[RMDB]
RNA sequence: GGGAACGACUCGAGUAGAGUCGAAAAACUGCCAAACGUGGCAGAAACACGCCUUACCAGGACUAAACAGCGUGUCUAAAAAACAGUCCUUCAUACCUGAUCUGGAGGGUAGAUCAGGAAUACUAAAAAAAUCGGGUGAAGUUCGCUUCACCCGAAACUACUCCGAUGUGUUCGCACAUCGGAGUAGAAAAGAAACAACAACAACAAC
Reactivity to 2A3 in 0.01 (KOAc 150mM, MgCl2 10mM, bicine 150mM(pH8.5), 24C), signal-to-noise 1, nucleotides 027 to 156: a010c000u000g000c000c000a100a100a200c190g070u090g010g010c000a000g000a000a050a000c000a000c010g010c000c000u010u030a000c010c010a000g000g000a000c010u070a130a060a020c000a000g000c020g010u000g010u010c150u020a010a010a000a000a000a000c020a000g000u000c020c000u020u090c020a070u090a110c000c000u000g000a000u020c000u000g040g070a100g100g070g050u050a000g000a000u040c020a000g020g000a000a020u100a050c100u140a070a030a060a000a000a030a090u030c000g000g030g000u010g000a000a000g030u040u080c150g010c070u000u010c000a000c000c000c000g000a000a000a000
Background: Structure probing data (2A3) for a 207-nucleotide construct. For 2A3, 1,007 sequencing reads were counted. The RNA was probed in 150 mM KOAc, 10 mM MgCl2 and 150 mM bicine (pH 8.5) at 24 C. Source: RMDB library M2RFOK, as collected in RNAgym.